[RMDB]
Structure probing data (2A3 and DMS) for a 177-nucleotide construct. Source: RMDB libraries RFM100 and RFMREP, as collected in RNAgym. The RNA was probed in 150 mM KOAc, 10 mM MgCl2 and 150 mM bicine (pH 8.5) at 24 C.
RNA sequence: GGGAACGACUCGAGUAGAGUCGAAAAUAUGCACCUGCCACCGCUUUUCGUCAAGAAACAGAAACCGCAACAGGGUGUCGCAGUAAUAAUCUUUCAGAAAGCGGGCAGUUUUAUGCCUGAUAUUACAUCCUACUUACAUUUUCGAAUGUAAGUAGGAAAAAGAAACAACAACAACAAC
Reactivity to 2A3 in 0.01 (KOAc 150mM, MgCl2 10mM, bicine 150mM(pH8.5), 24C), signal-to-noise 6, nucleotides 027 to 126: u230a100u080g030c030a030c020c010u020g010c030c020a080c060c030g010c010u060u060u030u070c030g050u020c070a040a060g040a030a140a020c040a030g100a070a070a030c020c010g040c050a090a070c030a130g050g070g030u060g020u040c030g000c070a010g040u010a000a020u060a040a040u030c030u030u090u070c030a040g080a090a040a010g010c000g010g010g000c000a000g010u040u060u070u170a040u050g020c000c010u010g040a030u050a040u140u080a040c050a060
Reactivity to DMS in 0.01 (KOAc 150mM, MgCl2 10mM, bicine 150mM(pH8.5), 24C), signal-to-noise 9, nucleotides 027 to 126: u010a050u020g020c090a080c150c010u010g010c020c040a140c130c040g000c030u000u000u000u010c050g010u010c180a050a060g000a050a060a060c130a100g000a080a090a050c050c040g010c050a080a070c090a130g010g020g030u010g010u010c060g020c060a050g000u010a030a090u010a070a160u000c030u000u010u020c130a110g000a030a040a070g000c020g010g000g000c000a020g000u010u030u030u020a070u010g000c010c040u000g000a060u020a030u010u010a090c140a150